[RMDB]
RNA sequence: GGGAACGACUCGAGUAGAGUCGAAAAAAAGAUAUGGAUAUCACUUGAUUUCUGUCAACGUUUGACGAAUGUCGGAAACGACAUUCCGAGUUGAAACAGAUAAGGAUUGUGAUAUCCUAAGUCAAAACCUAUACCAAACGUUCGCGUUUGGUAUAGGAAAAGAAACAACAACAACAAC
Reactivity to 2A3 in 0.01 (KOAc 150mM, MgCl2 10mM, bicine 150mM(pH8.5), 24C), signal-to-noise 3, nucleotides 027 to 126: a010a000a050g110a020u120a020u190g000g000a000u000a000u010c010a010c020u030u040g040a050u070u110u000c010u030g060u050c000a030a010c070g090u100u300u300g050a030c020g010a000a000u000g010u000c000g000g010a040a070a060c010g010a000c000a010u020u010c000c010g030a030g000u010u000g070a280a180a060c000a000g020a040u190a190a090g180g050a070u050u100g000u000g000a000u000a000u000c000c000u010a100a040g050u010c020a040a060a040a160
Reactivity to DMS in 0.01 (KOAc 150mM, MgCl2 10mM, bicine 150mM(pH8.5), 24C), signal-to-noise 3, nucleotides 027 to 126: a090a040a050g030a020u000a300u000g030g000a010u000a000u000c000a000c000u000u000g010a300u000u000u000c000u000g020u000c000a010a030c000g010u020u010u010g010a300c300g020a020a010u020g020u010c010g030g010a110a080a210c000g000a000c000a020u000u000c010c000g000a090g000u000u010g000a070a070a040c020a010g000a020u020a010a040g000g020a250u010u010g000u000g000a020u000a000u000c010c000u000a020a040g010u000c030a110a070a100a190